RNA sequence: GGGAACGACUCGAGUAGAGUCGAAAAGAGAUGGCGAGAGCCAUCGGUAGUAUAGCGAAAAUCAUAAAUGAGAAGAGCUCUAAACGCCUAAGUAGAGUUAGAAUAAUUAGACAGGCACUACUACAAACACGGCCUCGAACGUUCGCGUUCGAGGCAACCCAUGUCUUAUCUUCGGAUAAGACAUGGGAAAAGAAACAACAACAACAAC
Reactivity to DMS in 0.01 (KOAc 150mM, MgCl2 10mM, bicine 150mM(pH8.5), 24C), signal-to-noise 1, nucleotides 027 to 156: g000a200g000a050u000g020g000c010g070a260g010a300g070c000c010a020u010c060g010g040u000a090g050u000a120u000a050g030c090g000a110a080a070a140u000c020a120u000a060a050a060u000g000a150g000a150a140g000a210g000c000u010c020u000a030a070a090c100g010c080c020u000a050a090g010u000a020g000a120g000u000u020a110g000a110a110u000a050a090u000u000a090g000a030c050a080g020g030c020a050c070u020a010c030u000a050c050a080a050a070c100a120c150g030g020c010c010u010c010g000a000a020c020g010u000u000c250g020c000g000u020u000c000g010a020g050g020c000a000a020
Reactivity to 2A3 in 0.01 (KOAc 150mM, MgCl2 10mM, bicine 150mM(pH8.5), 24C), signal-to-noise 4, nucleotides 027 to 156: g130a000g000a000u000g010g020c000g010a070g010a000g050c000c000a020u000c000g010g000u010a010g010u010a030u090a050g030c050g060a060a050a050a020u110c060a080u130a210a130a100u160g010a090g050a140a040g030a010g010c000u000c010u020a090a090a010c070g030c010c010u040a130a010g010u030a010g010a010g020u030u080a040g070a120a060u190a110a020u180u040a030g030a040c040a030g000g030c010a010c040u030a020c010u010a010c030a030a180a000c100a060c150g110g000c000c010u010c000g010a000a010c000g020u070u050c160g000c000g080u010u000c010g000a000g000g010c000a000a000